Source: RMDB library OK1LIB, as collected in RNAgym. This 177-nucleotide RNA was probed chemically with 2A3 and DMS. Values cover nucleotides 27 to 126.
[RMDB]
RNA sequence: GGGAACGACUCGAGUAGAGUCGAAAAAGGACAUUGGCUAUUUAUUGUUAGAUGUAAAUCAAGCUUCUGUCGUCAAUGGUGGUUCAAGAGCGUACACACCAUAUUCGCCACAAGUUCGCAAGUUAAACGGAUUAAAGAAGUUCGCUUCUUUAAUCCGAAAAGAAACAACAACAACAAC
Reactivity to 2A3 in 0.01 (KOAc 150mM, MgCl2 10mM, bicine 150mM(pH8.5), 24C), signal-to-noise 8, nucleotides 027 to 126: a000g140g000a010c010a000u010u010g010g000c010u030a020u020u060u020a050u020u060g130u120u090a170g070a210u130g040u050a020a020a050u100c190a120a010g000c000u020u010c020u030g030u010c010g060u040c020a050a040u040g000g010u010g010g010u050u070c060a110a060g050a030g250c050g040u050a020c190a010c000a000c040c010a010u030a070u070u090c100g070c030c000a060c010a060a050g020u070u090c040g020c050a070a000g010u040u090a080a050a040
Reactivity to DMS in 0.01 (KOAc 150mM, MgCl2 10mM, bicine 150mM(pH8.5), 24C), signal-to-noise 4, nucleotides 027 to 126: a090g000g000a010c000a010u000u000g000g010c000u000a030u000u000u000a030u010u000g010u030u100a130g000a120u020g000u010a020a000a000u000c160a050a020g000c010u010u010c030u000g000u000c000g000u030c100a060a050u020g010g030u010g000g020u020u020c120a080a090g010a130g030c120g000u020a080c080a140c050a020c020c010a010u010a080u010u010c020g010c010c030a110c110a060a080g030u000u000c040g010c040a050a120g000u020u020a030a090a210

The reactions ran in a buffer of 150 mM KOAc, 10 mM MgCl2 and 150 mM bicine (pH 8.5), at 24 C. The 2A3 profile rests on 9,614 reads. DMS (dimethyl sulfate) methylates the pairing face of unpaired adenines and cytosines.